[RMDB]
RNA sequence: GGGAACGACUCGAGUAGAGUCGAAAAGAUAUGGAGCUCGCGAAACCUACCCACCUUGACUAUCGGAAACGAUAGAAUCAAGAGGGGAGAGCUCCUAAGUCAAAAGUACAGACUUCGGUCUGUACAACUUAUUAUCUCCCUUCGGGGAGAUAAUAAGAAAAGAAACAACAACAACAAC
Reactivity to DMS in 0.01 (KOAc 150mM, MgCl2 10mM, bicine 150mM(pH8.5), 24C), signal-to-noise 2, nucleotides 027 to 126: g010a100u010a180u010g000g020a030g020c000u000c010g030c200g000a080a140a190c050c040u000a120c010c000c000a190c050c000u000u000g000a020c000u000a000u000c000g010g000a070a140a190c000g010a010u000a000g000a100a160u010c000a000a000g000a170g000g000g010g000a110g000a020g010c000u000c000c010u010a030a100g010u010c110a070a070a130a130g010u000a010c000a000g000a000c000u000u000c160g010g000u000c000u000g000u000a000c010a060a080